About this RNA: Source: RMDB library TTRDES, as collected in RNAgym. Chemical mapping of a 177-nucleotide RNA with DMS.
RNA sequence: GGGAACGACUCGAGUAGAGUCGAAAAGAUAUGGAAUUUGUAGGGAGCUCCUAUUCGGAAACGAAUAGCGAGCUUUGAUCUAUUGAUUCCUAAGUCAAAGGUGAUAAGGCUUCGGCCUUAUCACCAACUAUUGUUCUUCCUUCGGGAAGAACAAUAGAAAAGAAACAACAACAACAAC
Reactivity to DMS in 0.01 (KOAc 150mM, MgCl2 10mM, bicine 150mM(pH8.5), 24C), signal-to-noise 2, nucleotides 027 to 126: g010a020u000a010u000g000g000a010a000u000u000u000g020u000a010g000g000g000a020g020c000u000c020c000u000a010u000u000c000g020g000a010a000a010c000g010a010a010u000a000g010c300g020a010g000c000u000u000u000g010a010u000c000u010a020u000u010g000a000u000u000c000c000u010a000a130g010u000c020a040a110a150g010g010u000g000a020u010a010a010g010g020c000u010u020c300g060g010c010c000u010u000a000u000c010a010c000c000a020a030
DMS adducts were read by reverse transcription with MarathonRT. Reactivities are given for positions 27 through 126.